[RMDB]
RNA sequence: GGGAACGACUCGAGUAGAGUCGAAAAAUGGAGUCACACUCGACAUAGAUUGCGUGAUUGAUUUUGGGCUCAAGGUUGUAGCAGUUCUCGACACAGAUAAUCGAUGCGUUCGCUACAACAAGCAAUCGCAACUGAAUGGGUUCGCCCAUUCAGUUGCAAAAGAAACAACAACAACAAC
Reactivity to 2A3 in 0.01 (KOAc 150mM, MgCl2 10mM, bicine 150mM(pH8.5), 24C), signal-to-noise 3, nucleotides 027 to 126: a000u160g030g010a010g030u050c010a090c010a000c200u010c020g020a020c030a020u070a090g090a100u000u010g010c040g040u010g050a190u020u000g040a040u010u150u150u120g140g010g000c010u010c040a020a040g090g000u030u000g000u000a000g000c060a030g000u040u000c040u000c030g000a000c070a000c050a050g070a120u260a140a050u110c020g000a060u100g040c000g060u100u010c060g000c010u000a010c000a000a000c000a000a000g000c050a050a040u020c040
Reactivity to DMS in 0.01 (KOAc 150mM, MgCl2 10mM, bicine 150mM(pH8.5), 24C), signal-to-noise 1, nucleotides 027 to 126: a030u000g000g000a020g030u000c030a110c090a280c110u000c050g080a180c050a090u030a070g000a000u000u000g010c060g000u000g020a180u050u010g000a050u000u000u000u010g000g000g090c250u000c070a050a110g010g020u000u050g000u000a000g000c010a010g010u010u000c020u000c010g000a050c020a050c290a190g000a070u000a020a120u060c040g000a000u010g010c110g010u030u000c110g000c000u000a030c000a020a040c030a130a030g020c000a020a030u000c020

Record summary:
Chemical mapping of a 177-nucleotide RNA with 2A3 and DMS. For DMS, 1,388 sequencing reads were counted.